RNA sequence: GGGAACGACUCGAGUAGAGUCGAAAAAUAAAUGAUGAGUUAACGCUCAUCAAAGUAACGAAAGUUGGCGAUUCGGUACACAUGGAAACAUGCGCCAAACGGAUAAAUACACAGAAUCCGAAAAAAAGUAAGAGAGAUAGUUCGCUAUCUCUCUUACAAAAGAAACAACAACAACAAC
Reactivity to DMS in 0.01 (KOAc 150mM, MgCl2 10mM, bicine 150mM(pH8.5), 24C), signal-to-noise 3, nucleotides 027 to 126: a090u000a030a160a150u000g000a010u000g010a020g000u000u010a100a150c300g000c000u010c000a000u000c000a010a030a130g030u000a070a090c070g010a090a050a080g010u000u000g000g020c040g000a180u000u000c020g000g010u000a090c110a240c060a020u000g000g010a170a080a140c060a000u000g030c030g000c000c030a010a060a140c070g000g000a090u010a000a040a040u000a100c180a070c130a200g000a090a060u000c020c000g040a000a000a060a050a070a060a210
Reactivity to 2A3 in 0.01 (KOAc 150mM, MgCl2 10mM, bicine 150mM(pH8.5), 24C), signal-to-noise 2, nucleotides 027 to 126: a000u060a010a060a060u070g000a010u000g000a000g010u030u100a100a010c090g010c010u000c000a010u020c030a010a010a010g050u010a060a010c030g030a110a010a040g110u030u010g000g000c010g040a090u090u000c030g060g070u110a050c110a000c010a080u060g040g030a000a050a030c020a060u090g050c010g010c030c000a030a010a020c010g000g000a020u040a050a120a010u200a060c120a010c000a080g170a120a020u000c010c030g080a160a020a000a000a000a020a000